[RMDB]
RNA sequence: GGGAACGACUCGAGUAGAGUCGAAAACGUACUGCAACCUGGCACAUGCUCAAUUAUCAUUCCAUGGUCAUAAAGACAGUGUCAAGUUCUUCCUUGGAGUACCUGGAGCAUCGAAGAACGGAGAAGACCACUAAUGGGUCUUCGGACCCAUUAGUGGAAAAGAAACAACAACAACAAC
Reactivity to DMS in 0.01 (KOAc 150mM, MgCl2 10mM, bicine 150mM(pH8.5), 24C), signal-to-noise 2, nucleotides 027 to 126: c060g030u010a040c060u010g030c050a100a040c050c010u010g010g000c050a050c030a050u000g000c040u010c110a090a140u000u000a100u000c080a140u000u000c030c090a080u010g040g030u000c070a030u000a050a070a100g000a060c020a080g010u010g000u000c040a070a130g000u000u000c040u000u000c000c020u000u000g030g000a120g020u000a040c030c080u010g030g000a140g000c010a010u010c100g000a060a030g010a050a040c060g010g000a080g010a090a070g010a150
Reactivity to 2A3 in 0.01 (KOAc 150mM, MgCl2 10mM, bicine 150mM(pH8.5), 24C), signal-to-noise 2, nucleotides 027 to 126: c000g010u050a040c030u070g020c040a050a100c020c010u000g020g050c000a000c020a150u080g000c010u010c050a010a150u080u020a060u220c020a070u280u000c090c010a010u030g060g000u040c010a020u090a100a220a000g030a050c010a010g020u000g030u160c060a060a000g010u060u010c000u020u000c040c010u020u040g050g060a040g020u080a070c000c020u070g040g040a030g000c020a020u040c040g060a080a040g010a040a000c010g020g010a060g020a090a000g050a040